[RMDB]
RNA sequence: GGGAACGACUCGAGUAGAGUCGAAAAGUGGCAUACUUCGGUAUGCCACAAACCAGUCCCUAUCUGGAACACGCUCUACUGCGUGAUCCCAAGUAGAUCCCAAAAGUCGUGGGUUCGCCCACGACAACCAUUCAAGUCCGUUCGCGGACUUGAAUGGAAAAGAAACAACAACAACAAC
Reactivity to DMS in 0.01 (KOAc 150mM, MgCl2 10mM, bicine 150mM(pH8.5), 24C), signal-to-noise 2, nucleotides 027 to 126: g010u020g000g040c000a000u000a000c000u010u070c210g050g000u000a000u000g000c010c000a000c000a000a060a080c090c110a080g010u000c110c110c030u010a040u010c030u000g010g040a090a190c000a030c030g010c000u000c270u010a090c110u000g000c040g020u010g000a050u000c020c000c010a040a070g020u000a020g010a120u000c010c000c010a040a060a150a140g000u000c000g020u000g000g000g000u000u010c120g010c030c010c000a020c000g020a000c000a020a050
Reactivity to 2A3 in 0.01 (KOAc 150mM, MgCl2 10mM, bicine 150mM(pH8.5), 24C), signal-to-noise 2, nucleotides 027 to 126: g000u000g000g000c010a000u010a010c000u040u060c230g060g010u000a000u020g010c020c000a000c000a000a000a000c000c000a010g060u060c050c010c000u010a050u050c010u010g000g010a040a020c010a000c020g000c000u020c050u190a170c140u090g040c010g000u010g040a040u050c000c010c000a060a040g020u050a010g030a100u010c040c000c000a030a090a030a070g010u000c000g000u010g000g020g000u010u000c220g080c000c000c000a000c010g010a000c000a000a010